The data come from the RNA Mapping Database (RMDB), library OK1LIB.
Chemical mapping of a 177-nucleotide RNA with DMS and 2A3.

RNA sequence: GGGAACGACUCGAGUAGAGUCGAAAAUGCUCAUGAAAGGUGCGUCAGAUGGGGAGCAUUGUGAGCACACUGUCUUGCAAGGGAAAAUGUCGCGUUGACGCUGCGAGGAGGCGUGUCAGCACCAGCAACCAUCCUCGCGUUUCGACGCGAGGAUGGUAAAAGAAACAACAACAACAAC
Reactivity to DMS in 0.01 (KOAc 150mM, MgCl2 10mM, bicine 150mM(pH8.5), 24C), signal-to-noise 2, nucleotides 027 to 126: u070g000c020u000c000a040u020g020a090a100a010g000g040u020g000c050g000u000c080a090g020a280u010g000g010g020g080a080g020c090a050u000u000g020u000g020a040g010c000a030c130a120c140u020g000u000c020u000u020g000c070a050a000g010g000g010a050a100a160a100u060g010u020c030g040c160g010u000u000g000a140c030g020c060u010g000c000g010a040g010g020a100g010g000c130g000u010g000u030c050a140g000c010a060c070c060a160g020c180a100
Reactivity to 2A3 in 0.01 (KOAc 150mM, MgCl2 10mM, bicine 150mM(pH8.5), 24C), signal-to-noise 2, nucleotides 027 to 126: u010g000c000u000c030a030u080g190a020a040a040g000g000u050g010c020g120u120c020a010g050a300u120g010g010g010g010a030g000c000a020u060u010g020u000g000a000g050c000a040c010a010c030u090g010u100c000u000u050g000c070a080a030g000g000g150a060a210a000a010u280g070u050c030g010c010g080u060u140g010a010c000g000c080u100g000c000g000a010g000g040a020g010g050c060g000u010g040u020c040a000g010c030a030c000c000a010g030c000a000